[RMDB]
RNA sequence: GGGAACGACUCGAGUAGAGUCGAAAAUGAGGCCAGGCACGCAGGCUCUGAACUCGGGGGCCAGAGAGAGAGUACAGGACAGGCCUGGGGACGCGGCUCCCUGAGCCUUGGUUUUGUCACCUGCAAAACGGGCCAGAUACUCCCAUCUCACAGGGCAAUGUUAUACAACGUUCGCGUUGUAUAACAUAAAAGAAACAACAACAACAAC
Reactivity to 2A3 in 0.01 (KOAc 150mM, MgCl2 10mM, bicine 150mM(pH8.5), 24C), signal-to-noise 2, nucleotides 027 to 156: u170g010a040g010g010c000c030a040g060g040c070a020c130g060c000a020g020g000c010u000c000u030g070a140a060c070u080c160g010g000g000g000g030c060c010a010g020a000g000a000g000a000g010a010g050u140a020c030a050g010g030a000c010a020g030g030c010c020u030g010g000g020g000a000c020g000c110g300g060c150u010c000c000c000u010g020a010g000c000c000u060u070g110g000u030u010u000u000g000u000c030a030c050c020u020g000c000a000a000a040a080c030g000g000g000c000c000a020g010a070u070a070c030u010c000c010c010a050u050c060u040c010a100c020a070g070g020g000c020a040
Reactivity to DMS in 0.01 (KOAc 150mM, MgCl2 10mM, bicine 150mM(pH8.5), 24C), signal-to-noise 2, nucleotides 027 to 156: u010g040a150g010g050c000c000a200g020g000c090a070c120g000c040a030g030g000c030u000c030u000g010a020a060c040u010c150g030g010g010g080g060c300c000a120g000a100g010a200g010a180g000a190g000u010a040c020a170g070g010a060c060a160g020g070c000c030u000g020g020g040g030a040c030g080c160g040g040c160u000c020c010c010u000g000a070g010c010c010u020u000g010g000u020u000u000u030g000u000c030a120c050c010u000g000c000a030a060a090a090c010g010g000g000c030c020a110g040a290u000a060c040u000c010c030c000a170u010c030u010c030a070c020a100g030g010g000c070a140